Source information: An RNA of 177 nucleotides, treated with 2A3 and DMS and read out base by base. Conditions: 150 mM KOAc, 10 mM MgCl2 and 150 mM bicine (pH 8.5), 24 C. It was measured as part of the RMDB library OK1LIB. 2A3 is a SHAPE reagent: it acylates the 2'-hydroxyl of flexible nucleotides of all four kinds. For DMS the reverse transcriptase was MarathonRT. 2A3 adducts were read by reverse transcription with SuperScript II with manganese.
RNA sequence: GGGAACGACUCGAGUAGAGUCGAAAACCUCCUGCCGCCGCCCUCGGCCAGGGCGCAGAACGGCGCGCAGCAGGAGAGUUCUGCCUCGGGAGACAGCGGCCGCAGAGACAGGCGCUGCGCAUGCGGCGCUGCCAUGCACGUUCGCGUGCAUGGCAGCAAAAGAAACAACAACAACAAC
Reactivity to 2A3 in 0.01 (KOAc 150mM, MgCl2 10mM, bicine 150mM(pH8.5), 24C), signal-to-noise 5, nucleotides 027 to 126: c000c000u010c000c000u010g010c010c000g010c000c000g000c010c010c010u070c050g070g020c060c040a240g100g120g000c110g000c020a030g030a120a030c030g050g010c010g000c040g000c020a030g000c000a010g000g100a020g030a010g030u080u030c020u050g010c000c000u030c010g030g050g010a070g030a050c050a030g010c040g110g030c010c000g000c020a010g030a010g030a110c030a060g020g050c020g000c040u030g000c030g010c030a040u140g010c010g020g010c030
Reactivity to DMS in 0.01 (KOAc 150mM, MgCl2 10mM, bicine 150mM(pH8.5), 24C), signal-to-noise 3, nucleotides 027 to 126: c050c010u000c010c010u000g000c020c080g020c040c000g000c010c030c120u000c040g030g020c040c030a280g010g030g000c170g020c000a030g000a010a080c270g010g040c020g020c110g000c080a060g000c020a070g000g020a080g000a100g050u010u000c020u000g000c000c010u010c030g000g000g000a110g010a080c130a100g040c030g000g030c000c060g020c030a050g010a130g010a100c130a080g010g000c030g010c000u000g030c060g030c130a140u000g020c020g010g010c080